[RMDB]
RNA sequence: GGGAACGACUCGAGUAGAGUCGAAAAGGCGUGCGCUCGCAGGCGGAGAUGGUCGCCGCGCUGCGCCGGCUGAACGUCGAAUGCGAAGCGGUCGGCCCCGAGGCGCGGCUGCCGAUCAGCAUGCGCAGACGGCUAGCUAUUUCGAUAGCUAGCCGUCAAAAGAAACAACAACAACAAC
Reactivity to DMS in 0.01 (KOAc 150mM, MgCl2 10mM, bicine 150mM(pH8.5), 24C), signal-to-noise 2, nucleotides 027 to 126: g030g000c030g000u020g000c040g030c030u000c050g030c030a050g010g000c000g000g000a050g000a180u010g030g010u000c300g010c010c000g000c010g040c040u000g000c170g000c050c070g000g000c000u000g010a040a100c030g000u000c050g000a140a120u020g000c070g010a160a110g000c030g000g020u000c000g010g000c020c060c120c190g030a120g010g000c000g030c010g000g020c010u000g010c020c030g000a090u000c020a060g000c000a030u010g020c000g000c080a100
Reactivity to 2A3 in 0.01 (KOAc 150mM, MgCl2 10mM, bicine 150mM(pH8.5), 24C), signal-to-noise 1, nucleotides 027 to 126: g060g010c020g010u080g030c070g060c030u030c050g000c050a050g060g000c020g120g040a110g020a110u160g000g000u030c030g000c000c020g040c010g000c040u110g040c020g000c010c000g020g010c020u020g010a060a030c020g090u110c070g150a210a030u260g060c020g050a130a010g030c000g000g000u030c000g000g000c000c060c020c030g030a110g050g000c050g000c010g000g030c020u000g000c020c010g000a030u060c000a020g040c010a020u000g000c050g000c050a000